RNA sequence: GGGAACGACUCGAGUAGAGUCGAAAAAAAGUGUCAAAGAACAGAUUCAAAUUCCUGAAUCGACUGGACCCAAGAAAGAUGUUUACCCUGCUAAGUUUGGGUACGCCAAGAUUGACGAAAUCGAACGCGUUUAGAGUUCUUUCGAGAACUCUAAACGAAAAGAAACAACAACAACAAC
Reactivity to DMS in 0.01 (KOAc 150mM, MgCl2 10mM, bicine 150mM(pH8.5), 24C), signal-to-noise 3, nucleotides 027 to 126: a060a100a090g000u000g020u000c040a090a060a050g010a140a030c120a110g000a010u000u000c010a050a080a160u000u000c160c120u000g010a010a020u000c000g010a080c080u010g000g010a120c040c010c020a070a070g000a060a060a060g010a050u020g000u000u000u000a100c040c030c010u000g000c080u010a080a100g000u000u000u000g010g010g030u000a020c050g020c050c030a070a150g010a140u000u010g010a020c100g030a040a030a040u000c060g000a070a140c300g010
Reactivity to 2A3 in 0.01 (KOAc 150mM, MgCl2 10mM, bicine 150mM(pH8.5), 24C), signal-to-noise 1, nucleotides 027 to 126: a000a000a000g120u090g000u010c020a030a100a000g020a080a070c020a060g000a000u000u000c000a000a090a170u140u090c030c010u040g000a010a010u010c010g050a040c020u040g040g040a020c020c000c010a010a000g130a020a060a030g090a070u070g000u090u060u070a070c020c000c000u020g060c000u230a210a080g080u100u130u050g000g000g000u000a010c010g030c000c030a080a000g130a170u040u080g010a020c040g010a080a020a020u110c040g050a070a000c040g000
About this RNA: Source: RMDB library OK2TST, as collected in RNAgym. Structure probing data (DMS and 2A3) for a 177-nucleotide construct. The 2A3 profile rests on 1,106 reads. For DMS, 1,552 sequencing reads were counted. 2A3 adducts were read by reverse transcription with SuperScript II with manganese. DMS adducts were read by reverse transcription with MarathonRT. The RNA was probed in 150 mM KOAc, 10 mM MgCl2 and 150 mM bicine (pH 8.5) at 24 C.